Chemical mapping of a 177-nucleotide RNA with 2A3 and DMS. The reactions ran in a buffer of 150 mM KOAc, 10 mM MgCl2 and 150 mM bicine (pH 8.5), at 24 C.

[RMDB]
RNA sequence: GGGAACGACUCGAGUAGAGUCGAAAAUAUUAGUAGGGGGUAAAUGUUCACAAAAAGAGUGCGAAACUGUACAUGAUUCCACUAUUUGGAUAGAGACACAGAGGGACACCAGACCGUCACAAUGUGAGCCCCGUAUACUGUUCGCAGUAUACGGGGCAAAAGAAACAACAACAACAAC
Reactivity to 2A3 in 0.01 (KOAc 150mM, MgCl2 10mM, bicine 150mM(pH8.5), 24C), signal-to-noise 1, nucleotides 027 to 126: u030a000u080u100a000g060u000a000g000g000g050g130g000u000a110a120a120u000g030u140u140c020a030c070a070a300a000a000a000g140a000g010u030g000c020g070a030a000a000c240u150g000u090a080c020a170u030g100a120u040u020c000c000a030c000u110a110u040u170u080g020g030a050u000a250g000a000g100a000c000a000c000a000g020a210g100g010g000a000c000a030c000c000a000g050a000c030c040g000u000c000a050c070a200a020u000g060u020g000a000
Reactivity to DMS in 0.01 (KOAc 150mM, MgCl2 10mM, bicine 150mM(pH8.5), 24C), signal-to-noise 1, nucleotides 027 to 126: u060a000u000u020a020g010u030a000g000g000g030g000g000u030a140a170a140u010g020u000u030c120a120c110a020a130a170a080a100g010a050g000u000g000c110g060a000a000a100c110u000g000u000a000c000a060u060g000a140u030u010c020c020a030c150u010a030u000u000u000g010g010a000u000a080g060a150g000a170c250a030c130a010g050a020g090g010g000a000c050a000c050c050a120g000a130c060c040g000u000c030a000c100a000a070u010g010u000g010a180